[RMDB]
RNA sequence: GGGAACGACUCGAGUAGAGUCGAAAAGCGCAUUCGGGCAUUGGUCUCCUCCGGAUUGGCGGCGAAAAAGAAGGUCAACGCAUCGUCGUCGGAACUACAACCAACAGCCCCGGGUGCCAGUGCCGCCCCUCAGCCUCGGUUUCGACCGAGGCUGAGGAAAAGAAACAACAACAACAAC
Reactivity to 2A3 in 0.01 (KOAc 150mM, MgCl2 10mM, bicine 150mM(pH8.5), 24C), signal-to-noise 1, nucleotides 027 to 126: g120c120g050c040a010u000u060c000g000g000g000c000a000u000u000g000g000u000c020u000c050c030u110c000c050g080g220a210u160u210g180g000c000g010g000c020g000a220a000a000a000a110g230a080a080g020g110u290c090a290a000c020g000c090a030u090c000g030u000c020g010u020c110g000g000a150a180c110u150a000c120a020a030c000c000a000a210c060a060g080c100c050c100c000g000g000g000u000g000c000c000a000g000u060g100c000c020g190c000c000